[RMDB]
RNA sequence: GGGAACGACUCGAGUAGAGUCGAAAAGUAAAGGCGAGUGAGAAGAUCACAGAAUGCCAAAAGCACGCUUAGAAACGGACAUCUCUGAGCUAAAGUGCACGCAAUAAGCGAAAGAUGCCGAAAAAAAAGGUAAUGACUUAUUCGUAAGUCAUUACCUAAAAGAAACAACAACAACAAC
Reactivity to 2A3 in 0.01 (KOAc 150mM, MgCl2 10mM, bicine 150mM(pH8.5), 24C), signal-to-noise 3, nucleotides 027 to 126: g040u050a060a080a030g030g010c020g030a030g000u020g010a040g000a170a110g070a070u010c000a000c010a030g160a100a050u140g010c000c000a000a030a030a000g010c010a000c050g010c020u060u040a020g040a050a100a030c030g010g060a030c020a060u020c030u000c050u050g030a010g000c000u050a100a130a030g030u040g040c050a010c070g000c010a020a230u160a270a040g020c000g050a080a060a000g010a010u030g000c020c030g040a130a040a010a000a000a000a000
Reactivity to DMS in 0.01 (KOAc 150mM, MgCl2 10mM, bicine 150mM(pH8.5), 24C), signal-to-noise 5, nucleotides 027 to 126: g010u020a070a120a150g000g010c010g020a090g040u000g000a020g000a150a090g000a110u000c020a030c010a090g000a070a090u000g010c010c030a060a090a090a150g000c010a070c060g000c020u000u000a070g010a040a070a090c040g000g000a100c030a040u000c020u000c060u000g010a240g010c030u010a050a070a200g010u000g000c110a100c080g000c030a070a050u000a110a070g000c050g010a120a100a060g010a030u000g020c010c010g000a010a010a010a010a060a070a090

Structure probing data (2A3 and DMS) for a 177-nucleotide construct.
It was measured as part of the RMDB library M2PK90.
For DMS the reverse transcriptase was MarathonRT.
The DMS profile rests on 5,500 reads.